[RMDB]
RNA sequence: GGGAACGACUCGAGUAGAGUCGAAAAGAAAGAAAGAAAGAGUCCCUAGGAGUUCCUUUCAAGCACUUUACGACACACUGUAUUGAGAGUUGUCGUGAAGUGUUUGGGGGAACUCUUAGUGUCGCAAAGCUUUAAUGACGUUCGCGUCAUUAAAGCUAAAAGAAACAACAACAACAAC
Reactivity to DMS in 0.01 (KOAc 150mM, MgCl2 10mM, bicine 150mM(pH8.5), 24C), signal-to-noise 2, nucleotides 027 to 126: g020a140a100a090g000a140a110a080g000a070a080a170g000a130g000u000c060c050c000u010a040g000g020a020g020u000u000c000c000u010u020u040c000a000a000g000c040a010c000u000u000u000a010c000g010a000c000a030c150a060c020u000g020u070a140u050u010g010a090g010a070g000u030u000g000u000c000g030u020g000a000a010g010u000g010u000u000u000g010g010g030g000g020a000a000c000u000c000u000u000a000g010u000g030u010c040g000c110a120a110
Reactivity to 2A3 in 0.01 (KOAc 150mM, MgCl2 10mM, bicine 150mM(pH8.5), 24C), signal-to-noise 5, nucleotides 027 to 126: g110a020a070a000g100a040a100a010g130a050a130a000g110a040g050u040c020c020c010u000a000g010g000a000g010u000u010c010c010u010u250u300c040a000a000g000c010a000c000u010u000u000a000c000g010a010c000a000c000a000c010u060g110u260a230u300u300g150a180g010a000g100u110u050g000u000c000g010u000g000a000a000g000u000g000u000u000u000g000g000g000g000g000a000a000c000u000c000u000u010a000g000u000g020u040c030g000c170a180a150
Structure probing data (DMS and 2A3) for a 177-nucleotide construct. DMS adducts were read by reverse transcription with MarathonRT. 2A3 adducts were read by reverse transcription with SuperScript II with manganese. The DMS profile rests on 3,518 reads. For 2A3, 2,193 sequencing reads were counted. The reactions ran in a buffer of 150 mM KOAc, 10 mM MgCl2 and 150 mM bicine (pH 8.5), at 24 C.